The record gives the reactivity of an RNA of 177 nucleotides to 2A3 and DMS.
The RNA was probed in 150 mM KOAc, 10 mM MgCl2 and 150 mM bicine (pH 8.5) at 24 C.
High DMS reactivity at an A or C suggests that its Watson-Crick edge is free.
RNA sequence: GGGAACGACUCGAGUAGAGUCGAAAAAUGCCGCAUUCAGUGACGGUCACUCUAGUGGGCUACUGUCUAUCUAGCGUUGACAUCUACAUACUAUAUAGUAAUACCAAUACUCAAGACUACGAAACGGAUACCUACCUGGAUUCGUCCAGGUAGGUAUAAAAGAAACAACAACAACAAC
Reactivity to 2A3 in 0.01 (KOAc 150mM, MgCl2 10mM, bicine 150mM(pH8.5), 24C), signal-to-noise 6, nucleotides 027 to 126: a000u120g010c010c010g080c040a020u110u080c070a030g080u010g070a050c050g030g000u010c000a020c010u020c010u020a020g010u040g000g020g000c020u140a090c100u240g020u000c000u010a110u020c000u000a010g000c010g040u010u060g010a010c010a080u010c020u040a030c010a140u120a040c030u040a040u060a050u090a230g060u060a070a070u020a140c020c010a110a030u020a060c020u070c070a090a000g050a060c050u060a050c130g110a100a070a010c050g020g000
Reactivity to DMS in 0.01 (KOAc 150mM, MgCl2 10mM, bicine 150mM(pH8.5), 24C), signal-to-noise 3, nucleotides 027 to 126: a030u020g020c000c050g000c040a050u010u020c050a120g000u000g000a090c100g010g000u010c000a030c040u010c000u020a050g010u000g000g020g010c050u040a080c210u010g010u020c020u020a010u040c030u000a030g000c090g000u020u010g000a050c040a110u020c070u000a060c120a110u010a060c040u010a250u010a080u000a020g000u000a060a060u010a070c130c020a030a070u010a050c020u020c080a040a040g000a040c110u000a060c100g000a050a060a040c160g010g010